[RMDB]
RNA sequence: GGGAACGACUCGAGUAGAGUCGAAAAGAUAUGGACGUGGAGACAUGAUGGCAGUCGGAAACGACUGCUCAUCAACAGCUCCGUCCUAAGUCAAACUAUCCCAACGCGUUCGCGCGUUGGGAUAGAACAAACAAUAGAUCUUCGGAUCUAUUGUUUGAAAAGAAACAACAACAACAAC
Reactivity to 2A3 in 0.01 (KOAc 150mM, MgCl2 10mM, bicine 150mM(pH8.5), 24C), signal-to-noise 5, nucleotides 027 to 126: g030a030u090a050u130g020g000a010c080g180u280g120g020a010g000a050c100a160u090g000a000u000g010g000c000a000g000u010c010g010g000a070a080a030c000g010a000c000u000g000c000u010c010a010u000c000a010a030c030a010g050c000u000c000c000g000u000c000c000u020a150a010g040u010c040a040a050a110c020u000a010u020c010c000c020a000a000c000g020c000g010u070u120c300g000c000g000c000g160u000u010g000g000g000a000u000a000g000a000a000
Reactivity to DMS in 0.01 (KOAc 150mM, MgCl2 10mM, bicine 150mM(pH8.5), 24C), signal-to-noise 8, nucleotides 027 to 126: g000a050u010a300u000g010g000a020c010g010u010g020g000a020g000a040c070a200u000g010a010u000g010g000c000a010g010u000c000g010g000a080a090a170c010g010a020c000u000g000c000u010c000a000u000c000a020a060c180a170g000c000u000c010c000g000u000c000c000u010a040a100g010u000c020a130a110a250c010u000a000u000c010c000c000a010a010c000g020c000g020u000u010c220g020c010g010c000g020u000u000g000g000g000a000u000a000g000a070a170